This 177-nucleotide RNA was probed chemically with 2A3 and DMS. Conditions: 150 mM KOAc, 10 mM MgCl2 and 150 mM bicine (pH 8.5), 24 C. For 2A3 the reverse transcriptase was SuperScript II with manganese.
[RMDB]
RNA sequence: GGGAACGACUCGAGUAGAGUCGAAAAUGCAAGCCCGUUAACUGCUCUUGGAAAUCGUAGAUGUGUGCAAAAUCAAUCCUCACAAUAGCAAGUGAUUUUAGUUCCUCUAACUCAAAUCCAUUUACAUUAUUGAGUAUCAUUUCGAUGAUACUCAAUAAAAAGAAACAACAACAACAAC
Reactivity to 2A3 in 0.01 (KOAc 150mM, MgCl2 10mM, bicine 150mM(pH8.5), 24C), signal-to-noise 9, nucleotides 027 to 126: u140g020c030a030a040g010c010c000c010g010u070u090a070a030c030u040g030c000u000c030u040u040g040g030a050a050a070u070c040g030u070a050g020a120u060g070u020g020u020g080c050a030a080a020a050u070c030a010a050u020c010c010u030c010a090c010a070a050u050a040g040c040a100a050g030u050g130a080u020u030u030u070a030g010u040u030c030c020u040c050u060a040a050c010u010c070a020a030a050u010c020c010a040u090u090u080a080c070a070u010
Reactivity to DMS in 0.01 (KOAc 150mM, MgCl2 10mM, bicine 150mM(pH8.5), 24C), signal-to-noise 7, nucleotides 027 to 126: u030g010c080a080a120g010c020c000c020g000u020u010a060a090c090u010g000c030u000c040u030u000g010g000a060a060a070u000c070g010u010a070g000a060u010g010u010g010u010g020c090a050a050a060a070u020c080a070a080u010c040c020u000c060a050c110a040a070u010a070g020c070a040a050g000u010g000a070u000u010u000u010a090g010u000u000c050c030u000c110u010a050a050c050u000c090a040a050a060u010c040c040a090u010u010u010a080c160a150u000